This 207-nucleotide RNA was probed chemically with DMS and 2A3. 2A3 adducts were read by reverse transcription with SuperScript II with manganese. For DMS the reverse transcriptase was MarathonRT. The RNA was probed in 150 mM KOAc, 10 mM MgCl2 and 150 mM bicine (pH 8.5) at 24 C.
RNA sequence: GGGAACGACUCGAGUAGAGUCGAAAAACAUGCUGGCCAACCCAACCCCACGAUCCUCCAGCGGCAUGAUCAUGAUGUGUUCUCAAAUAUCAGGCCAGUAAAUCACCAUGCUCGUGCUGGUAAAGGCAACUUAUGCCCAAGUUCGCUUGGGCAUAAACGGUAUUUAAAUAUUCGUAUUUAAAUACCGAAAAGAAACAACAACAACAAC
Reactivity to DMS in 0.01 (KOAc 150mM, MgCl2 10mM, bicine 150mM(pH8.5), 24C), signal-to-noise 3, nucleotides 027 to 156: a070c050a100u000g010c000u000g000g020c020c020a160a150c090c040c050a100a140c040c010c020c010a090c110g000a120u000c040c010u000c040c020a150g010c030g030g040c030a030u000g000a020u010c030a050u000g010a040u010g020u000g010u000u000c040u010c050a100a060a090u000a110u000c040a100g020g020c000c020a070g010u000a010a050a110u010c030a050c000c010a010u000g010c120u000c000g050u000g010c010u000g030g010u000a040a060a030g020g010c060a070a100c090u000u000a030u000g010c010c000c000a000a050g010u000u030c280g040c030u000u020g010g010g020c000a000u000a010a010a130
Reactivity to 2A3 in 0.01 (KOAc 150mM, MgCl2 10mM, bicine 150mM(pH8.5), 24C), signal-to-noise 6, nucleotides 027 to 156: a000c030a020u060g000c000u000g000g010c000c000a030a030c070c020c050a040a090c020c020c040c020a070c090g040a130u050c000c020u030c000c010a020g030c020g020g000c000a010u020g010a020u050c030a040u050g040a030u080g030u010g030u090u000c040u020c030a070a100a020u270a110u130c080a050g010g000c000c010a000g000u010a030a050a020u080c020a020c030c000a010u010g000c010u030c070g070u060g010c000u010g010g000u030a100a100a020g030g000c010a030a030c030u010u010a000u010g000c000c000c000a000a010g000u030u050c060g020c130u010u030g040g000g000c000a000u000a000a010a000